[RMDB]
RNA sequence: GGGAACGACUCGAGUAGAGUCGAAAAGCAGGAGUGUUCGCACUCCUGCAAAUGAAAGCGGCCAGCUCCAGGCCGCCAAACAAUAUGGAGGACAAAGUAAAGAAAGGCCUACGUUCGCGUAGGCCAAGAACUGAGGAUAGUUCGCUAUCCUCAGUUCAAAAGAAACAACAACAACAAC
Reactivity to DMS in 0.01 (KOAc 150mM, MgCl2 10mM, bicine 150mM(pH8.5), 24C), signal-to-noise 2, nucleotides 027 to 126: g000c000a010g010g000a000g010u000g000u000u000c230g030c000a000c010u010c000c000u010g000c000a000a010a030u010g000a080a180a130g010c000g010g000c000c000a080g000c010u000c000c000a010g010g020c000c000g030c000c150a020a080a040c100a050a020u000a050u000g000g020a010g020g010a130c210a070a080a080g010u010a100a110a060g030a070a130a120g020g010c000c000u010a000c000g010u000u030c180g000c020g030u000a010g010g000c000c000a020a010
Reactivity to 2A3 in 0.01 (KOAc 150mM, MgCl2 10mM, bicine 150mM(pH8.5), 24C), signal-to-noise 2, nucleotides 027 to 126: g000c000a010g000g000a010g010u050g040u040u120c110g040c060a000c000u000c000c020u010g010c010a000a000a000u100g020a020a050a020g000c000g010g010c000c040a040g040c020u010c000c000a000g010g000c000c000g000c000c010a020a070a000c060a010a010u020a030u060g000g000a000g000g000a010c100a050a230a010g200u260a120a110a020g120a100a110a010g020g000c000c010u000a030c010g030u000u060c160g000c000g070u000a000g000g000c010c000a010a010
Chemical mapping of a 177-nucleotide RNA with DMS and 2A3. Conditions: 150 mM KOAc, 10 mM MgCl2 and 150 mM bicine (pH 8.5), 24 C. 2A3 adducts were read by reverse transcription with SuperScript II with manganese. For 2A3, 2,805 sequencing reads were counted. Reactivities are given for positions 27 through 126. Source: RMDB library M2PK50, as collected in RNAgym.